[RMDB]
RNA sequence: GGGAACGACUCGAGUAGAGUCGAAAAUCAAGCAGAUGGCGUUUACCAGGAGGCUGGGAUCAGGGAUCAUGUCGCCGACUACCUCACCGGCCUUGGUGGGGAGGACGUGCUCCUCAAACAUCUAGCAGUGUUUGCUAGUUUUCGAACUAGCAAACACAAAAGAAACAACAACAACAAC
Reactivity to 2A3 in 0.01 (KOAc 150mM, MgCl2 10mM, bicine 150mM(pH8.5), 24C), signal-to-noise 2, nucleotides 027 to 126: u080c020a000a060g020c000a000g030a070u020g040g090c060g060u050u060u080a160c040c020a040g020g090a070g170g000c030u020g000g060g000a070u080c060a010g030g000g000a010u020c010a020u070g020u000c040g030c150c000g090a070c030u200a240c020c010u000c000a000c000c030g200g010c090c060u130u130g010g020u010g000g030g000g000a000g020g010a010c000g000u030g010c000u000c000c000u040c000a070a110a050c030a030u050c020u020a050g030c060a020
Reactivity to DMS in 0.01 (KOAc 150mM, MgCl2 10mM, bicine 150mM(pH8.5), 24C), signal-to-noise 3, nucleotides 027 to 126: u000c100a110a160g000c040a030g010a010u000g010g000c120g000u000u000u010a130c030c010a050g000g010a170g040g010c020u000g000g000g010a070u000c090a140g000g000g010a030u020c010a010u020g000u010c040g010c110c120g000a300c060u000a140c020c010u010c020a020c010c000g020g040c250c140u000u020g000g050u000g020g020g000g010a040g000g010a050c060g040u000g000c070u010c010c010u000c090a070a080a060c070a010u000c050u000a080g030c050a090